[RMDB]
Structure probing data (DMS and 2A3) for a 177-nucleotide construct. It was measured as part of the RMDB library OK1LIB. DMS adducts were read by reverse transcription with MarathonRT. The RNA was probed in 150 mM KOAc, 10 mM MgCl2 and 150 mM bicine (pH 8.5) at 24 C. For 2A3, 2,935 sequencing reads were counted.
RNA sequence: GGGAACGACUCGAGUAGAGUCGAAAAGUGAAGACUUGUAGUGCCGUGCUUCGUUAAUAGUUCACCUCGAUAACCGUUAUAAUACAAGUCUUAACGGUGCAUAAUAUCAGAAGGCAAAGAGAAGCGGUGGUAAUCGUACUUUCGAGUACGAUUACCAAAAAGAAACAACAACAACAAC
Reactivity to DMS in 0.01 (KOAc 150mM, MgCl2 10mM, bicine 150mM(pH8.5), 24C), signal-to-noise 4, nucleotides 027 to 126: g010u000g020a080a030g000a010c040u000u010g000u000a060g010u010g020c030c010g000u000g010c010u020u000c010g030u030u030a080a100u010a070g000u000u000c080a120c050c000u000c070g000a030u010a050a010c010c000g010u020u000a010u020a040a130u030a090c200a030a030g010u010c070u000u000a030a010c000g010g010u000g000c210a100u020a050a150u020a030u030c030a040g020a060a040g020g000c060a030a080a080g000a090g000a030a020g000c040g010g010
Reactivity to 2A3 in 0.01 (KOAc 150mM, MgCl2 10mM, bicine 150mM(pH8.5), 24C), signal-to-noise 4, nucleotides 027 to 126: g150u140g110a070a020g020a020c020u040u040g020u050a060g090u040g100c030c060g040u100g050c030u010u040c010g080u070u200a060a010u070a210g060u030u120c010a080c040c000u020c050g020a030u040a040a040c010c010g000u000u000a060u040a100a090u080a060c070a080a040g010u000c020u010u010a020a000c010g010g000u030g000c040a110u130a190a080u090a110u100c040a050g070a130a060g110g000c090a160a060a010g100a010g010a080a000g010c020g020g020